[RMDB]
RNA sequence: GGGAACGACUCGAGUAGAGUCGAAAACAUUACGAAUUCAGUCGCAAAUGGUAGAAUUAGCUACUCUACGAUUUAGUGAGCGUUAGUAACGUUGUAAUAUAAUAUAGUCUUUGGAAGGAUUAUAUUGGAGCCGCGGACAAGUUCGCUUGUCCGCGAAGCAAUAGAUAGAGUUCGCUCUAUCUAUUGCAAAAGAAACAACAACAACAAC
Reactivity to DMS in 0.01 (KOAc 150mM, MgCl2 10mM, bicine 150mM(pH8.5), 24C), signal-to-noise 1, nucleotides 027 to 156: c040a070u000u010a060c050g000a100a080u000u000c070a070g000u000c000g030c010a010a080a060u000g020g010u010a060g010a120a230u000u000a180g010c110u020a050c010u000c000u000a000c020g020a040u000u000u000a090g030u020g000a060g020c070g030u000u010a040g010u000a050a050c050g000u000u000g010u010a070a180u000a110u000a020a030u000a010u000a040g000u010c000u000u000u000g040g010a300a200g000g000a000u000u000a030u000a010u000u000g020g020a180g010c060c020g030c020g000g010a000c010a000a010g000u000u000c260g000c000u030u000g000u000c010c020g030c000g000a000a060
Reactivity to 2A3 in 0.01 (KOAc 150mM, MgCl2 10mM, bicine 150mM(pH8.5), 24C), signal-to-noise 4, nucleotides 027 to 156: c030a060u120u150a030c040g050a070a100u130u120c060a060g080u040c020g000c030a020a020a030u050g050g010u000a010g020a060a040u090u060a050g030c030u070a030c010u010c010u010a000c010g120a020u020u030u060a090g010u020g050a040g070c030g020u020u100a040g030u060a080a010c060g010u010u020g000u030a080a100u070a090u020a160a020u010a000u000a010g010u000c030u070u090u110g160g020a140a080g030g000a000u000u000a000u000a000u010u010g060g030a040g090c090c000g000c010g000g000a000c000a010a000g000u040u110c160g030c110u000u000g000u000c010c000g000c000g000a000a000